Conditions: 150 mM KOAc, 10 mM MgCl2 and 150 mM bicine (pH 8.5), 24 C. This 207-nucleotide RNA was probed chemically with 2A3. Source: RMDB library PDB130, as collected in RNAgym. For 2A3, 1,097 sequencing reads were counted. 2A3 adducts were read by reverse transcription with SuperScript II with manganese.
RNA sequence: GGGAACGACUCGAGUAGAGUCGAAAAAAGACUAUACUUUCAGGGAUCAUUUCUAUAGUGUGUUACUAGAGAAGUUUCUCUGAACGUGUAGAGCACCGAAAACCACGAGGAAGAGAGGUAGCGUUUUCUCCUGAGCGUGAAGCCGGCUUUCUGGCGUCUACUACAGAGCGUUCGCGCUCUGUAGUAGAAAAGAAACAACAACAACAAC
Reactivity to 2A3 in 0.01 (KOAc 150mM, MgCl2 10mM, bicine 150mM(pH8.5), 24C), signal-to-noise 2, nucleotides 027 to 156: a020a000g050a010c000u010a010u000a020c010u050u010u000c000a020g020g010g010a000u050c020a040u090u020u030c010u020a000u000a040g010u040g050u080g100u300u240a010c010u020a010g020a000g000a030a000g000u000u050u030c000u000c000u000g000a000a000c000g010u020g010u000a000g000a010g010c010a050c010c040g020a040a020a000a100c030c040a040c100g050a000g060g030a050a040g020a000g000a000g070g010u070a010g020c020g050u090u020u060u020c040u010c000c020u050g020a020g030c020g040u030g090a020a030g000c020c010g060g000c100u080u100u050c040u110g070g020c050g040u000